[RMDB]
RNA sequence: GGGAACGACUCGAGUAGAGUCGAAAAGGGGUCACAAUAAGCAUGUACUUUUGACGUAUCGACGAUCUACUGAAGCCUCCACGGUAGGGAGAUACGAUAAGUACAUGGUUGCCUUGUGACGGAGGCACCCAAAUCCACCAGGUUCGCCUGGUGGAAACACCUUAGAAAGGUUCGCCUUUCUAAGGUGAAAAGAAACAACAACAACAAC
Reactivity to DMS in 0.01 (KOAc 150mM, MgCl2 10mM, bicine 150mM(pH8.5), 24C), signal-to-noise 1, nucleotides 027 to 156: g000g020g030g010u000c040a010c070a070a050u000a050a090g080c010a020u000g010u000a010c000u000u000u000u010g000a200c160g020u010a010u000c000g020a090c210g000a080u000c000u000a010c010u010g000a050a130g030c020c010u000c010c030a300c060g010g020u000a020g030g000g000a080g010a010u000a000c020g020a070u000a020a010g020u000a020c000a060u010g020g000u000u000g020c090c160u010u020g020u020g020a040c040g000g030a000g100g000c020a090c020c020c040a040a060a150u000c000c000a010c010c000a000g000g020u000u010c300g030c010c000u000g000g010u000g000g000a010a030a100
Reactivity to 2A3 in 0.01 (KOAc 150mM, MgCl2 10mM, bicine 150mM(pH8.5), 24C), signal-to-noise 4, nucleotides 027 to 156: g030g030g040g030u010c010a010c010a040a040u220a180a030g130c000a010u020g000u010a000c010u050u060u130u300g300a140c070g000u010a010u010c020g110a240c010g010a120u000c010u000a000c000u020g030a100a040g020c000c010u020c010c010a010c000g010g000u000a010g000g000g000a020g000a000u000a000c000g070a080u070a100a000g000u010a000c010a000u010g010g020u040u110g050c000c020u000u010g010u010g000a010c020g000g000a000g000g000c010a050c000c000c010a030a070a030u010c000c000a000c000c010a000g010g050u050u070c160g130c090c020u000g040g000u010g000g000a000a000a000

Notes:
The record gives the reactivity of an RNA of 207 nucleotides to DMS and 2A3. Conditions: 150 mM KOAc, 10 mM MgCl2 and 150 mM bicine (pH 8.5), 24 C. It was measured as part of the RMDB library RNAMAK. DMS adducts were read by reverse transcription with MarathonRT. For 2A3, 4,297 sequencing reads were counted.